[RMDB]
RNA sequence: GGGAACGACUCGAGUAGAGUCGAAAACACGUAAAGCUGUGCGUCCACGCAGAAAAGAUGUCCAGGCUCGUCAAGAUGGGACCCUUUUCCGCCGGAUCUCUCACAGUCUGCGUGGCUCAGGGAUCCGCCCUACCAAGUGCUUCGGCACUUGGUAGGGAAAAGAAACAACAACAACAAC
Reactivity to DMS in 0.01 (KOAc 150mM, MgCl2 10mM, bicine 150mM(pH8.5), 24C), signal-to-noise 1, nucleotides 027 to 126: c040a100c020g030u050a040a070a190g020c030u020g020u000g030c300g020u000c020c020a070c070g000c040a020g010a040a040a070a040g000a010u000g000u010c010c020a140g020g000c040u000c080g010u000c250a060a060g000a010u060g000g000g030a050c080c120c040u010u010u010u000c010c100g030c040c060g020g000a000u020c150u030c100u000c040a090c140a070g010u000c020u020g010c020g040u000g000g010c070u030c050a040g020g020g010a110u000c020c050g010
Reactivity to 2A3 in 0.01 (KOAc 150mM, MgCl2 10mM, bicine 150mM(pH8.5), 24C), signal-to-noise 1, nucleotides 027 to 126: c030a010c040g120u130a000a070a140g070c010u010g010u050g080c030g070u000c010c010a030c020g010c010a000g000a070a060a000a000g040a030u110g020u040c030c000a020g110g050c010u040c120g110u060c090a060a010g040a070u170g030g010g000a040c020c000c000u030u030u000u000c020c040g030c030c010g040g010a010u030c040u020c010u000c050a050c010a050g060u000c030u040g020c020g020u030g020g020c010u000c070a050g060g010g050a010u040c000c010g020
The data come from the RNA Mapping Database (RMDB), library OK2TST.
The record gives the reactivity of an RNA of 177 nucleotides to DMS and 2A3.
The RNA was probed in 150 mM KOAc, 10 mM MgCl2 and 150 mM bicine (pH 8.5) at 24 C.
For 2A3, 1,585 sequencing reads were counted.
Values cover nucleotides 27 to 126.